[RMDB]
RNA sequence: GGGAACGACUCGAGUAGAGUCGAAAAUAAAACACGUAACGUGAGCUCAGCUAGUAGUGCAGCAGGACCGAAACCUGCAGCGAAAGGGAUCAAGACCCUGUUCGCGCAAAAACUAGAGAAAAAAAAACCUUAAGGUAGGGUUCGCCCUACCUUAAGGAAAAGAAACAACAACAACAAC
Reactivity to 2A3 in 0.01 (KOAc 150mM, MgCl2 10mM, bicine 150mM(pH8.5), 24C), signal-to-noise 1, nucleotides 027 to 126: u090a010a040a010a020c120a000c050g130u220a300a000c030g040u020g040a000g060c030u010c030a040g050c000u020a000g030u020a010g040u000g030c020a030g070c000a000g010g070a120c100c040g120a100a010a030c010c010u000g000c000a000g000c030g000a000a000a000g000g000g030a000u220c120a020a060g240a160c000c000c000u030g300u050u000c000g020c000g030c010a020a020a010a020a020c000u010a000g020a020g080a250a030a000a000a000a000a000a000a060
Reactivity to DMS in 0.01 (KOAc 150mM, MgCl2 10mM, bicine 150mM(pH8.5), 24C), signal-to-noise 1, nucleotides 027 to 126: u030a010a060a080a150c020a040c030g020u010a040a030c060g010u020g000a180g030c020u000c030a030g000c020u000a050g020u000a020g020u030g020c020a020g000c000a010g000g010a110c130c240g000a140a140a060c020c000u000g030c000a250g010c030g000a000a040a030g000g020g000a060u000c300a110a210g010a090c010c000c000u000g020u000u000c000g020c020g000c040a020a080a080a120a060c030u000a000g000a100g020a070a050a060a000a000a030a110a150a140